[RMDB]
RNA sequence: GGGAACGACUCGAGUAGAGUCGAAAAGUGACAUGGUACCAUGAGCUGCACUGUCUAGCUGGUACUCGUGAUCCAUCGCUAGGAGCUGGUACGUACUACGCAGUAUCUAGGUAUGAUCGUACCUCUACCCGCGAUUUAAGUUCGCUUAAAUCGCGGGAAAAGAAACAACAACAACAAC
Reactivity to 2A3 in 0.01 (KOAc 150mM, MgCl2 10mM, bicine 150mM(pH8.5), 24C), signal-to-noise 1, nucleotides 027 to 126: g160u150g040a010c010a080u040g010g020u020a010c070c050a150u130g100a000g100c040u040g000c050a080c190u000g050u090c100u050a010g020c050u060g040g010u010a040c000u020c060g020u020g010a040u000c000c050a050u080c030g000c170u020a040g070g100a030g080c100u010g010g000u040a010c060g010u020a060c020u010a010c060g140c140a020g050u120a200u200c070u100a060g120g000u090a020u100g050a090u030c030g000u000a050c000c000u000c000u050a120
Reactivity to DMS in 0.01 (KOAc 150mM, MgCl2 10mM, bicine 150mM(pH8.5), 24C), signal-to-noise 1, nucleotides 027 to 126: g000u000g020a020c110a060u000g000g030u000a020c050c000a240u020g040a090g050c040u010g000c100a230c200u030g020u050c090u000a040g020c050u000g000g000u000a020c000u010c040g000u000g020a160u000c030c050a040u000c060g020c000u010a090g000g020a080g010c120u000g000g000u000a040c070g030u000a250c190u000a030c070g010c040a000g020u000a100u010c050u000a150g010g010u000a090u000g000a110u000c040g050u000a050c040c000u000c030u000a090
Structure probing data (2A3 and DMS) for a 177-nucleotide construct. For DMS, 788 sequencing reads were counted. For DMS the reverse transcriptase was MarathonRT. The reactions ran in a buffer of 150 mM KOAc, 10 mM MgCl2 and 150 mM bicine (pH 8.5), at 24 C.